[RMDB]
RNA sequence: GGGAACGACUCGAGUAGAGUCGAAAACACUCGCGGCCGCCUGGACCGCGCCCGCCAGUUCUUUAACAAAGCCGAGGCCGAACUCUAUGACUCGGGUGUCCAGCUGCCACCCACAUACGACGCGAGGGAGCAACAGAAUUUUCGAAUUCUGUUGCUCAAAAGAAACAACAACAACAAC
Reactivity to DMS in 0.01 (KOAc 150mM, MgCl2 10mM, bicine 150mM(pH8.5), 24C), signal-to-noise 1, nucleotides 027 to 126: c150a120c030u000c050g030c000g000g000c050c030g040c020c030u000g000g000a080c040c190g000c090g000c090c020c030g000c060c080a120g000u000u000c000u020u010u010a080a110c200a090a110a120g000c080c020g000a070g000g000c020c010g050a040a050c090u030c040u000a090u030g010a070c040u010c000g010g010g030u000g000u010c030c030a090g020c070u000g000c100c010a090c010c010c010a030c030a050u020a140c060g000a040c050g030c090g000a060g000g000
Reactivity to 2A3 in 0.01 (KOAc 150mM, MgCl2 10mM, bicine 150mM(pH8.5), 24C), signal-to-noise 1, nucleotides 027 to 126: c030a020c000u000c010g000c000g000g010c010c030g010c090c050u070g030g020a070c030c000g000c040g000c040c000c010g050c000c000a040g030u060u000c120u020u220u170a110a060c070a120a110a060g070c050c010g020a050g040g130c040c030g070a090a050c020u040c040u170a090u260g040a050c020u020c020g000g020g010u050g030u000c030c000a020g000c030u040g070c000c020a070c010c080c000a020c010a030u250a120c050g090a000c040g000c030g020a080g000g100

The record gives the reactivity of an RNA of 177 nucleotides to DMS and 2A3. High DMS reactivity at an A or C suggests that its Watson-Crick edge is free. The reactions ran in a buffer of 150 mM KOAc, 10 mM MgCl2 and 150 mM bicine (pH 8.5), at 24 C. For DMS the reverse transcriptase was MarathonRT. The DMS profile rests on 841 reads.